RNA sequence: GGGAACGACUCGAGUAGAGUCGAAAAAGAUAGGACUACGGUCCUAUCAACCCGAUGAAGAACUACUCCCGCCUGAAGUGUGAUGAGCCACCUACCGGCGGAGGACUCCGCGAUACGUCGCGGAGAAAUGUUCCAAAAGGUUCGCCUUUUGGAACAUAAAAGAAACAACAACAACAAC
Reactivity to 2A3 in 0.01 (KOAc 150mM, MgCl2 10mM, bicine 150mM(pH8.5), 24C), signal-to-noise 6, nucleotides 027 to 126: a000g010a010u010a000g010g000a000c010u020a020c270g090g000u000c010c000u000a000u000c000a000a020c000c000c000g010a060u280g050a020a170g030a070a030c080u140a040c020u150c040c060c030g010c020c010u020g030a070a030g060u090g010u010g250a240u130g030a050g140c040c010a010c000c000u050a080c020c070g010g000c010g000g000a030g000g010a020c000u000c000c000g010c000g000a000u020a050c210g090u010c000g010c010g000g000a010g000a000a010
Reactivity to DMS in 0.01 (KOAc 150mM, MgCl2 10mM, bicine 150mM(pH8.5), 24C), signal-to-noise 4, nucleotides 027 to 126: a040g000a010u000a000g000g000a010c010u010a110c150g020g010u000c010c000u000a000u000c010a030a100c000c000c000g000a110u080g000a130a120g010a110a110c170u010a120c030u000c030c020c040g010c010c000u000g010a180a060g000u030g010u000g010a170u030g020a180g010c170c020a000c000c010u010a100c090c150g000g000c030g000g000a030g000g010a240c020u000c000c000g010c000g020a020u010a080c200g040u010c000g020c000g000g000a000g020a010a060

Record summary:
Conditions: 150 mM KOAc, 10 mM MgCl2 and 150 mM bicine (pH 8.5), 24 C. The record gives the reactivity of an RNA of 177 nucleotides to 2A3 and DMS.